An RNA of 177 nucleotides, treated with DMS and 2A3 and read out base by base. DMS adducts were read by reverse transcription with MarathonRT. Reactivities are given for positions 27 through 126. The RNA was probed in 150 mM KOAc, 10 mM MgCl2 and 150 mM bicine (pH 8.5) at 24 C. For DMS, 2,320 sequencing reads were counted. High 2A3 reactivity points to a flexible backbone, as in loops and unpaired stretches.
[RMDB]
RNA sequence: GGGAACGACUCGAGUAGAGUCGAAAAGCAUGCCAUGCAUGUACUAGACGUCGAUCCUAGCUAGGUCCAUGGCUAGUCGAUCCGGUACACUAGACGUGAUCAUGGCUGCCAUGUAGCUAGUAUGAUCUAAUCCUCGUGAGUUCGCUCACGAGGAUUAAAAAGAAACAACAACAACAAC
Reactivity to DMS in 0.01 (KOAc 150mM, MgCl2 10mM, bicine 150mM(pH8.5), 24C), signal-to-noise 3, nucleotides 027 to 126: g030c010a010u030g030c020c100a060u000g030c010a020u000g010u000a100c020u000a030g020a060c140g040u000c040g000a010u000c050c030u000a040g010c000u000a050g010g010u000c170c170a090u020g000g040c000u010a010g020u000c110g000a020u000c040c070g020g020u010a090c120a190c160u000a050g000a050c010g000u000g010a080u030c010a030u000g010g020c000u010g000c020c030a070u010g000u010a070g000c040u000a050g020u000a130u010g010a100u010c070
Reactivity to 2A3 in 0.01 (KOAc 150mM, MgCl2 10mM, bicine 150mM(pH8.5), 24C), signal-to-noise 2, nucleotides 027 to 126: g020c020a000u170g000c080c050a090u270g010c000a010u030g030u110a120c020u050a020g040a100c060g030u120c040g020a010u000c000c020u070a060g000c000u010a030g000g220u030c030c010a060u110g000g000c030u020a010g040u060c030g000a000u000c010c040g010g130u170a070c080a060c110u070a020g050a210c030g050u130g020a030u050c020a060u130g000g000c000u000g000c000c000a040u100g040u030a000g080c020u020a030g020u070a140u140g100a030u060c020